[RMDB]
RNA sequence: GGGAACGACUCGAGUAGAGUCGAAAAAUAAAUGAUGAGUUAACGCUCAUCAAAGUAACGAAAGAUGGCGAUUCGCUACACAUGGAAACAUGCGCCAAACGGAUAAAUACACAGAAUCCGAAAAAAACACGUAUCCAAGAUUCGUCUUGGAUACGUGAAAAGAAACAACAACAACAAC
Reactivity to DMS in 0.01 (KOAc 150mM, MgCl2 10mM, bicine 150mM(pH8.5), 24C), signal-to-noise 2, nucleotides 027 to 126: a120u000a010a090a170u010g000a000u020g000a040g010u000u000a160a120c300g030c000u000c000a020u000c000a050a020a130g020u000a030a000c040g000a050a020a050g020a130u020g000g010c000g040a300u000u010c030g000c050u000a030c040a300c060a030u000g000g020a110a030a110c080a080u000g010c000g070c000c000a090a140a220c020g000g000a030u000a120a160a030u000a140c290a040c250a090g020a100a030u040c000c000g010a000a000a050a050a050a020a240
Reactivity to 2A3 in 0.01 (KOAc 150mM, MgCl2 10mM, bicine 150mM(pH8.5), 24C), signal-to-noise 2, nucleotides 027 to 126: a020u100a010a040a060u050g000a010u000g000a010g020u070u100a080a020c060g030c040u000c000a000u000c000a010a000a000g030u010a060a010c040g000a100a000a100g130a050u070g000g000c000g040a070u130u030c060g010c100u060a010c030a010c000a120u100g010g000a000a040a010c030a020u080g060c000g000c000c020a030a040a030c000g000g010a000u010a080a130a010u170a050c110a010c000a090g170a090a020u040c060c080g060a140a060a000a010a000a000a000